[RMDB]
RNA sequence: GGGAACGACUCGAGUAGAGUCGAAAACCAGAACGAUGGUUACAAAUCUCUGGACGAAGGUCAGAAAGUGUCCUUCACCAUCGAAAGCGGCGCUAAAGGCCCGGCAGCUGGUAACGUAACCAGCCUGAAGGUUUCUUGAAUUCGUUCAAGAAACCUUAAAAGAAACAACAACAACAAC
Reactivity to 2A3 in 0.01 (KOAc 150mM, MgCl2 10mM, bicine 150mM(pH8.5), 24C), signal-to-noise 7, nucleotides 027 to 126: c000c000a000g010a080a010c020g020a000u010g010g030u080u120a090c070a050a210a150u110c130u040c070u150g120g010a060c080g020a040a020g020g020u050c040a020g200a200a280a040g260u120g010u050c000c020u000u000c010a010c010c010a030u050c000g010a040a050a000g110c020g010g000c010g000c030u080a130a020a030g040g010c030c000c030g050g000c000a020g000c000u000g000g020u060a120a070c060g010u020a030a030c010c000a000g000c000c010u040g070
Reactivity to DMS in 0.01 (KOAc 150mM, MgCl2 10mM, bicine 150mM(pH8.5), 24C), signal-to-noise 5, nucleotides 027 to 126: c000c000a060g010a040a090c020g000a000u000g000g010u000u050a130c220a050a080a130u030c090u040c200u050g000g000a060c090g000a010a000g000g000u000c020a060g010a100a090a110g000u010g000u000c020c010u000u010c010a070c020c010a010u000c010g010a140a150a130g030c040g000g010c020g020c030u010a110a130a060g010g000c090c020c010g020g010c060a100g000c000u000g000g000u010a100a110c170g010u020a100a040c000c000a000g000c020c100u000g000